[RMDB]
RNA sequence: GGGAACGACUCGAGUAGAGUCGAAAAUUGACAAAUUGUGUUAAGAUGCUUACUCCUAAAACUGGUACAGGUAUAGCUAUAUCUGUUAAACCAGAGAGUACAGCUGAUCAAGAGACUUAUGGUGGAGAAAGAUCUUCGUUCGCGAAGAUCAAAAGAAACAACAACAACAAC
Reactivity to DMS in 0.01 (KOAc 150mM, MgCl2 10mM, bicine 150mM(pH8.5), 24C), signal-to-noise 7, nucleotides 027 to 129: u050u030g000a090c100a050a060a130u060u030g030u030g000u040u020a070a110g030a100u040g000c000u000u000a000c060u020c010c290u020a020a050a120a270c030u030g000g000u040a030c000a000g030g000u020a010u030a130g000c210u070a020u020a000u000c010u000g030u000u000a040a050a010c010c010a010g010a030g010a000g020u020a030c230a020g030c030u030g010a060u000c080a070a050g020a090g030a100c070u000u000a090u020g040g030u020g010g000a060g000a090a070a080
Reactivity to 2A3 in 0.01 (KOAc 150mM, MgCl2 10mM, bicine 150mM(pH8.5), 24C), signal-to-noise 8, nucleotides 027 to 129: u040u090g060a020c050a020a080a060u170u080g040u020g040u100u080a090a010g030a080u100g010c000u010u010a010c000u030c030c090u090a100a090a050a090c010u010g020g020u010a010c000a000g000g020u010a020u010a040g130c250u160a040u000a030u010c000u000g020u060u160a050a070a000c000c000a000g020a010g000a000g020u010a020c090a060g000c020u030g010a020u030c020a020a010g050a020g020a060c020u100u060a090u180g110g030u050g020g020a050g040a050a110a010

Description: Structure probing data (DMS and 2A3) for a 170-nucleotide construct. Values cover nucleotides 27 to 129. The reactions ran in a buffer of 150 mM KOAc, 10 mM MgCl2 and 150 mM bicine (pH 8.5), at 24 C. The data come from the RNA Mapping Database (RMDB), library 15KLIB.